[RMDB]
RNA sequence: GGGAACGACUCGAGUAGAGUCGAAAAUUAAUGAUUAUGGGGAACCUAUGUUACCUGAAGAGGAAUCCCAUCACUUCCAUGUUCGUGUAGUGAAAGCUAUGGCCCAUAGUUUAGAUGCGCACACCACGUCUAGACUCUAGUUCGCUAGAGUCUAGACAAAAGAAACAACAACAACAAC
Reactivity to DMS in 0.01 (KOAc 150mM, MgCl2 10mM, bicine 150mM(pH8.5), 24C), signal-to-noise 3, nucleotides 027 to 126: u010u010a110a110u020g010a090u010u000a060u010g010g000g000g010a060a230c010c090u010a100u010g040u010u010a080c040c060u000g020a090a080g000a100g000g000a100a180u000c010c020c000a180u010c070a020c060u000u000c040c010a080u000g010u000u000c130g000u000g010u000a050g000u000g000a070a110a050g010c030u000a060u000g000g000c050c040c020a120u000a060g010u010u000u000a110g010a100u000g000c060g000c110a060c080a190c090c070a090c140
Reactivity to 2A3 in 0.01 (KOAc 150mM, MgCl2 10mM, bicine 150mM(pH8.5), 24C), signal-to-noise 2, nucleotides 027 to 126: u030u030a080a030u050g030a000u050u080a020u040g010g000g020g000a000a020c000c030u070a090u160g120u070u090a120c010c010u060g080a090a040g030a050g150g010a010a080u000c000c030c000a000u030c000a000c030u070u020c020c010a050u140g130u140u150c090g030u000g010u060a070g010u030g070a040a070a000g040c030u060a020u060g100g040c000c020c040a000u000a020g010u020u020u040a060g000a080u100g040c030g000c000a020c000a000c090c080a060c090